[RMDB]
RNA sequence: GGGAACGACUCGAGUAGAGUCGAAAAGAUAUGGAAUAUGUGGCGACGAUCUGUACAUCGGAAACGAUGUCACAGGGAGCCACAUAUUCCUAAGUCAAAGUAGGGUAAGCUUCGGCUUACCCUACAACUAACACUCCAAGUUCGCUUGGAGUGUUAGAAAAGAAACAACAACAACAAC
Reactivity to 2A3 in 0.01 (KOAc 150mM, MgCl2 10mM, bicine 150mM(pH8.5), 24C), signal-to-noise 3, nucleotides 027 to 126: g010a000u020a020u040g000g010a000a000u010a010u000g000u000g020g050c050g040a300c200g090a300u020c000u000g040u040a000c000a000u010c000g000g000a010a010a000c000g000a000u010g010u050c030a020c020a010g040g020g050a030g000c000c000a000c000a000u000a000u000u000c000c000u010a000a010g000u000c020a000a050a110g000u000a000g000g000g000u000a010a000g000c020u060u180c300g040g010c010u020u000a000c000c000c000u010a000c010a000a000
Reactivity to DMS in 0.01 (KOAc 150mM, MgCl2 10mM, bicine 150mM(pH8.5), 24C), signal-to-noise 5, nucleotides 027 to 126: g000a020u000a110u010g000g000a020a010u000a000u010g020u000g000g010c000g000a140c300g000a080u000c000u000g000u000a020c010a000u000c010g020g000a030a020a050c000g010a010u000g000u000c220a000c050a010g000g010g010a070g020c000c000a000c000a000u000a000u000u000c000c000u000a010a060g000u000c010a100a100a140g010u000a010g000g000g010u000a010a000g020c000u010u010c240g010g000c000u000u000a000c000c000c000u000a000c010a020a120